About this RNA
The record gives the reactivity of an RNA of 177 nucleotides to 2A3 and DMS. It was measured as part of the RMDB library M2PK50. The RNA was probed in 150 mM KOAc, 10 mM MgCl2 and 150 mM bicine (pH 8.5) at 24 C. Values cover nucleotides 27 to 126. 2A3 adducts were read by reverse transcription with SuperScript II with manganese.
RNA sequence: GGGAACGACUCGAGUAGAGUCGAAAACUGGAUACCUUCGGGUAUCCAGAAAGGGCGAGUAGUGUUGGGUCGCGAAAGGCCAUAAAUAAACAAUCACUCAGAAAAGCCAUAGCUUCGGCUAUGGCAACAACAUAAGCCGUUUCGACGGCUUAUGUUGAAAAGAAACAACAACAACAAC
Reactivity to 2A3 in 0.01 (KOAc 150mM, MgCl2 10mM, bicine 150mM(pH8.5), 24C), signal-to-noise 1, nucleotides 027 to 126: c010u000g000g000a020u020a030c010c010u040u040c100g150g000g010u000a010u000c000c000a000g020a070a010a000g030g060g050c020g000a000g010u080a000g010u100g070u140u110g130g030g010u000c050g060c090g140a130a090a050g030g000c020c000a020u170a060a120a030u050a010a080a020c000a010a100u140c030a020c050u020c040a010g130a110a140a040a030g000c000c020a000u000a000g000c000u070u060c300g100g000c010u000a000u000g020g000c000a000a010
Reactivity to DMS in 0.01 (KOAc 150mM, MgCl2 10mM, bicine 150mM(pH8.5), 24C), signal-to-noise 2, nucleotides 027 to 126: c000u000g000g000a000u000a000c000c000u010u020c200g060g000g000u000a000u000c000c000a020g000a000a080a080g030g000g010c060g020a060g000u000a080g010u010g000u010u000g000g000g030u000c040g000c090g000a030a100a050g000g000c010c010a060u000a080a050a170u010a120a010a100c060a060a090u000c110a010c030u000c030a200g010a080a060a060a160g000c000c000a000u000a000g000c000u000u000c220g010g010c000u000a000u000g020g010c010a010a040